[RMDB]
Structure probing data (DMS and 2A3) for a 207-nucleotide construct. For DMS the reverse transcriptase was MarathonRT. The 2A3 profile rests on 1,611 reads. 2A3 adducts were read by reverse transcription with SuperScript II with manganese. The RNA was probed in 150 mM KOAc, 10 mM MgCl2 and 150 mM bicine (pH 8.5) at 24 C.
RNA sequence: GGGAACGACUCGAGUAGAGUCGAAAAACAUGCUGGCCAACCCAACCCCACGAUCCUCCAUCGGCCUGAUCAUGAUGUGUUCUCAAAUAUCAGGCCAGUAAAUCACCAUGCUCGUGCUGGUAAAGGCAACUUAUGCCCAAGUUCGCUUGGGCAUAAAGUUCGUUAAAUUCUUCGGAAUUUAACGAACAAAAGAAACAACAACAACAAC
Reactivity to DMS in 0.01 (KOAc 150mM, MgCl2 10mM, bicine 150mM(pH8.5), 24C), signal-to-noise 2, nucleotides 027 to 156: a060c030a120u000g050c020u020g000g010c010c020a120a060c080c020c000a090a120c050c010c020c010a090c060g010a080u000c000c030u010c040c010a140u000c070g010g010c010c010u010g000a040u000c100a300u020g020a070u010g040u020g020u000u000c090u000c030a030a040a160u000a080u010c050a060g010g020c010c000a040g010u000a040a080a110u000c060a040c020c000a070u000g020c020u010c070g000u000g030c010u000g020g020u000a030a090a120g000g000c070a050a080c110u000u000a030u000g030c000c000c000a040a040g010u000u000c300g040c020u000u000g000g000g000c000a000u000a000a010a110
Reactivity to 2A3 in 0.01 (KOAc 150mM, MgCl2 10mM, bicine 150mM(pH8.5), 24C), signal-to-noise 2, nucleotides 027 to 156: a000c030a040u130g020c020u020g030g030c020c000a000a040c080c030c000a040a000c020c000c000c000a030c060g020a020u040c060c030u070c030c030a060u080c030g000g010c000c000u000g010a020u000c060a070u050g050a060u120g120u030g060u200u110c040u000c020a000a050a000u110a020u010c010a020g020g000c000c020a010g000u020a000a020a020u090c030a010c070c020a070u090g000c000u020c070g030u050g040c020u020g020g010u030a070a050a030g030g020c030a030a010c090u020u010a010u030g000c010c000c000a020a000g010u010u040c030g000c180u000u010g030g000g000c000a000u000a000a000a000